Overview: The data come from the RNA Mapping Database (RMDB), library OK3TST. Chemical mapping of a 207-nucleotide RNA with DMS and 2A3. For DMS, 1,258 sequencing reads were counted. For DMS the reverse transcriptase was MarathonRT. Reactivities are given for positions 27 through 156. The reactions ran in a buffer of 150 mM KOAc, 10 mM MgCl2 and 150 mM bicine (pH 8.5), at 24 C.
[RMDB]
RNA sequence: GGGAACGACUCGAGUAGAGUCGAAAAUGGUGUAACGUUCAAAGAUCUGAGGCCAAAUUCGACGUUCACUAAUAAAUUGGAGGCCAUCAACGUAGAAAAAAUAGAACUUAUCAAAGACGCAUAUGCCAAAUAUCUAAAAGAUGUAAGAGACGGGAAACCACUUGGACUGUUUCGACAGUCCAAGUGGAAAAGAAACAACAACAACAAC
Reactivity to DMS in 0.01 (KOAc 150mM, MgCl2 10mM, bicine 150mM(pH8.5), 24C), signal-to-noise 1, nucleotides 027 to 156: u000g040g030u010g010u010a020a010c000g000u000u000c090a150a040a090g020a100u000c010u010g080a150g080g010c050c020a080a040a220u000u000c030g070a060c000g060u000u000c080a060c000u020a110a090u000a020a130a190u010u000g000g000a200g070g010c070c010a030u000c060a080a010c020g040u010a040g030a000a000a140a060a080a160u000a080g000a010a010c020u000u000a060u000c010a070a270a160g000a000c070g000c040a030u000a060u020g030c000c030a000a100a040u000a090u000c030u000a000a060a070a100g040a150u000g020u000a090a000g010a100g030a110c070g000g000g030a070a050a300
Reactivity to 2A3 in 0.01 (KOAc 150mM, MgCl2 10mM, bicine 150mM(pH8.5), 24C), signal-to-noise 2, nucleotides 027 to 156: u080g000g010u010g030u080a000a000c010g010u030u070c120a120a130a000g020a110u010c070u120g020a060g010g050c020c080a030a050a070u100u130c100g020a010c010g010u000u050c020a010c030u060a050a210u030a150a040a020u050u080g050g000a010g030g020c040c000a010u050c050a030a060c030g040u100a070g060a130a110a020a020a050a040u110a040g100a020a060c040u090u010a070u190c040a060a030a030g050a020c030g000c040a020u040a060u160g000c000c000a020a140a060u050a060u090c060u070a060a040a030a020g030a030u080g010u050a060a040g020a020g040a070c010g010g000g020a040a070a040